RNA sequence: GGGAACGACUCGAGUAGAGUCGAAAAGGGUUUGAGCCAUCGCCCGAAUAAGAUGGUUGAUACAAGUCGCCAUUGUACGCGACGUAGUACGUACUCAUUAGUGCGAAAGCACGGUUAGUCCGACUUGGCAGGGACGAUCUUCUGUCAAUACUUAGAAGAUUAGCGCGGUAUUCGUACCGCGCUAAUCAAAAGAAACAACAACAACAAC
Reactivity to 2A3 in 0.01 (KOAc 150mM, MgCl2 10mM, bicine 150mM(pH8.5), 24C), signal-to-noise 2, nucleotides 027 to 156: g000g020g040u070u170u230g040a000g000c010c000a000u000c000g040c020c020c020g000a050a070u100a000a030g000a030u010g020g000u050u080g010a030u030a020c060a110a090g010u060c000g000c020c060a180u120u300g110u300a110c000g030c000g010a000c000g030u000a000g050u060a030c060g020u040a010c000u000c050a090u000u180a120g000u000g000c010g070a170a050a000g000c000a000c010g000g010u000u010a030g030u050c100c000g030a050c130u010u030g000g000c000a000g010g010g000a030c120g070a100u030c020u170u020c030u040g070u030c000a000a020u040a150c050u120u160a060g000a080a000